[RMDB]
RNA sequence: GGGAACGACUCGAGUAGAGUCGAAAAUCCCUUCCCGCUAAAUCCCCUUCGGGGUCAGUGCGCUACCAGCACAGGGCCGCACGCCUCUCCUGCUAGCCGUGUGGCUCUUAAAGAGCCCCACACCCCUUUAUUUGCAUACCUUCGGGUAUGCAAAUAAAAAAGAAACAACAACAACAAC
Reactivity to DMS in 0.01 (KOAc 150mM, MgCl2 10mM, bicine 150mM(pH8.5), 24C), signal-to-noise 1, nucleotides 027 to 126: u000c000c010c000u000u000c000c030c010g000c160u000a000a120a160u030c010c010c000c020u020u000c170g020g020g010g040u000c040a080g020u020g020c030g040c090u000a190c100c080a040g000c070a020c100a060g000g000g070c060c040g000c030a020c010g000c080c010u000c020u000c060c030u000g000c040u030a060g020c070c000g000u060g050u000g000g000c000u000c000u000u020a020a080a230g000a160g000c020c030c030c000a190c030a200c000c060c000c110u000
Reactivity to 2A3 in 0.01 (KOAc 150mM, MgCl2 10mM, bicine 150mM(pH8.5), 24C), signal-to-noise 2, nucleotides 027 to 126: u010c020c000c000u010u020c020c000c000g000c020u060a060a090a110u080c000c000c000c000u060u090c050g000g000g000g010u020c050a020g020u010g010c050g000c020u130a130c010c080a030g000c030a020c030a050g000g000g000c000c000g000c000a010c010g010c010c020u010c020u030c040c000u040g030c050u050a010g030c010c020g010u000g010u020g020g000c000u000c000u020u050a050a030a000g040a020g000c000c000c000c000a000c010a010c000c000c000c000u010